[RMDB]
RNA sequence: GGGAACGACUCGAGUAGAGUCGAAAAAUAUCAUUCGUGAUAUAAAUGUCCUAAGUCACAUCCGUUUGACGAUUAAGGGAGCCUUAUGUCGGAAACGACAUGAGGCGAAGAACUUAAUCCGAGGAUGUGAUAUGGAAUGCCCUCGGUUCGCCGAGAAUCUCCAAACUAUUUUCGAAUAGUUUGGAGAAAAAGAAACAACAACAACAAC
Reactivity to 2A3 in 0.01 (KOAc 150mM, MgCl2 10mM, bicine 150mM(pH8.5), 24C), signal-to-noise 5, nucleotides 027 to 156: a000u020a000u010c010a010u050u120c170g110u030g010a000u010a010u020a040a200a080u250g050u030c020c000u050a130a050g010u000c000a000c000a000u010c000c030g060u160u230u250g120a080c040g000a000u000u000a000a010g010g000g010a020g010c000c000u000u000a000u000g010u000c010g030g030a120a090a090c020g010a000c000a000u000g000a000g000g000c010g010a000a000g000a010a000c000u010u010a000a000u000c000c020g060a070g010g000a000u000g010u010g000a000u000a010u020g000g000a010a050u060g030c030c010c000u000c010g000g050u040u060c220g060c120c010g030a010g070a060a070
Reactivity to DMS in 0.01 (KOAc 150mM, MgCl2 10mM, bicine 150mM(pH8.5), 24C), signal-to-noise 2, nucleotides 027 to 156: a040u000a010u000c010a040u000u000c260g020u000g030a010u000a010u000a030a090a130u000g010u000c000c010u000a080a250g010u010c000a000c010a000u000c000c000g060u000u000u020g020a110c160g030a040u000u010a010a020g000g030g000a300g020c000c000u010u000a010u000g020u010c000g020g000a220a170a300c010g030a020c000a000u000g010a020g030g020c010g000a030a040g010a110a170c000u000u000a000a020u000c020c020g010a140g010g000a030u000g030u010g010a000u010a120u000g000g000a090a080u000g000c080c060c000u000c010g020g010u000u010c210g050c030c010g000a070g000a140a170